[RMDB]
This 177-nucleotide RNA was probed chemically with DMS and 2A3. The reactions ran in a buffer of 150 mM KOAc, 10 mM MgCl2 and 150 mM bicine (pH 8.5), at 24 C.
RNA sequence: GGGAACGACUCGAGUAGAGUCGAAAAAUUUUCACUUCUCUUGUUGAGGCUUUUCAGGAAUAGGAAUGCUGAUUUCCUUAGCACCUCAUUCUAAAGGUAUUCCCUUGAUGGGUAAGCCCCAUGAGAAUCAUUCAGUAUCCUUCGGGAUACUGAAUGAAAAAGAAACAACAACAACAAC
Reactivity to DMS in 0.01 (KOAc 150mM, MgCl2 10mM, bicine 150mM(pH8.5), 24C), signal-to-noise 3, nucleotides 027 to 126: a170u020u020u010u000c050a130c170u000u000c010u000c010u010u000g000u010u010g010a120g010g000c000u000u000u000u000c060a080g000g000a060a010u000a030g010g010a100a070u010g020c020u000g020a070u010u000u000c150c120u000u000a020g050c020a060c010c000u000c140a020u000u010c020u010a050a060a060g010g020u020a270u000u000c090c010c020u000u000g010a220u010g020g000g000u010a030a030g000c030c000c010c000a020u000g000a050g010a030a080
Reactivity to 2A3 in 0.01 (KOAc 150mM, MgCl2 10mM, bicine 150mM(pH8.5), 24C), signal-to-noise 2, nucleotides 027 to 126: a000u040u040u030u060c030a040c020u040u050c010u010c000u040u050g090u080u100g060a140g010g010c020u200u070u140u140c100a030g070g000a030a040u030a030g070g030a210a230u100g010c000u050g020a000u030u060u150c020c040u010u070a010g000c020a010c010c010u040c000a010u030u000c030u060a150a100a020g060g000u100a110u130u170c010c010c000u010u090g180a140u090g060g020g000u040a020a030g000c020c000c000c000a000u030g000a000g020a050a050